[RMDB]
RNA sequence: GGGAACGACUCGAGUAGAGUCGAAAAGAUAUGGAUCUAGGAGAAGCAGGAUAUUCGGAAACGAAUAUUCCUGUCUCUAGAUCCUAAGUCAAAGCUAGAAUUAUCCCUUCGGGGAUAAUUCUAGCAACAGAAGAGAAAUGUUCGCAUUUCUCUUCUGAAAAGAAACAACAACAACAAC
Reactivity to DMS in 0.01 (KOAc 150mM, MgCl2 10mM, bicine 150mM(pH8.5), 24C), signal-to-noise 4, nucleotides 027 to 126: g000a070u010a300u000g000g000a000u000c000u000a010g020g010a070g010a170a170g010c010a000g010g000a040u000a010u000u000c000g010g000a130a100a230c000g010a020a010u000a010u010u010c000c000u010g000u000c020u000c000u010a000g000a020u000c000c000u000a000a080g010u010c040a090a140a150g010c000u000a000g000a020a010u000u000a010u000c000c000c000u000u010c250g040g020g000g000a000u000a000a000u000u000c000u010a010g000c000a020a060
Reactivity to 2A3 in 0.01 (KOAc 150mM, MgCl2 10mM, bicine 150mM(pH8.5), 24C), signal-to-noise 3, nucleotides 027 to 126: g020a010u080a040u120g010g000a000u000c020u010a040g060g300a150g110a270a050g230c010a010g000g010a000u010a000u020u000c030g020g040a070a070a070c020g010a020a000u000a010u220u100c000c000u010g010u000c000u000c000u000a010g010a000u000c000c000u010a060a020g020u010c050a160a110a000g010c000u010a000g000a010a000u020u010a010u000c000c000c000u010u080c300g080g000g020g010a000u000a000a000u000u010c000u020a000g000c000a000a000
The record gives the reactivity of an RNA of 177 nucleotides to DMS and 2A3. The RNA was probed in 150 mM KOAc, 10 mM MgCl2 and 150 mM bicine (pH 8.5) at 24 C. For DMS, 6,392 sequencing reads were counted. 2A3 adducts were read by reverse transcription with SuperScript II with manganese.